[RMDB]
RNA sequence: GGGAACGACUCGAGUAGAGUCGAAAAUCUCAUGUUCGCAUGAGAAAAAAAUCCUAAGUCCUCAACAGCCAACGAGCUCAACAGCGUAUCGGAAACGAUACGACAUGAGCGAGUUGGACAUGAGGAUAUGGAAAAAAGCUUAGGUUCGCCUAAGCAAUACAUAAUAGGCGUUCGCGCCUAUUAUGUAAAAAGAAACAACAACAACAAC
Reactivity to 2A3 in 0.01 (KOAc 150mM, MgCl2 10mM, bicine 150mM(pH8.5), 24C), signal-to-noise 4, nucleotides 027 to 156: u020c000u000c000a000u000g030u050u070c260g040c140a020u060g000a010g000a090a020a000a000a000a000a040u020c010c000u030a090a020g030u000c000c000u000c040a100a120c040a180g050c000c000a000a000c010g000a000g000c000u000c000a050a210c050a110g020c010g000u000a010u000c000g000g060a080a050a020c010g000a000u000a000c000g060a040c000a070u070g000a000g000c010g000a000g000u000u000g000g020a000c000a110u060g000a000g000g000a000u000a010u040g000g020a050a050a040a040a050a020g000c000u010u010a010g010g030u030u060c220g100c070c000u000a000a000g020c000a000a010
Reactivity to DMS in 0.01 (KOAc 150mM, MgCl2 10mM, bicine 150mM(pH8.5), 24C), signal-to-noise 2, nucleotides 027 to 156: u000c000u000c000a000u000g010u000u040c300g100c020a000u000g010a060g040a010a000a010a110a130a110a190u030c010c000u000a120a250g020u000c010c000u040c000a030a180c110a200g010c030c000a000a010c010g010a300g000c000u000c010a000a040c080a120g030c010g010u000a010u010c000g020g000a180a120a220c000g000a030u000a000c000g060a000c070a300u000g010a000g040c000g010a300g010u000u000g010g010a010c030a230u000g000a040g050g060a020u000a050u020g010g010a000a080a150a060a100a070g010c010u000u000a000g010g000u000u010c300g060c020c000u000a000a000g000c000a040a080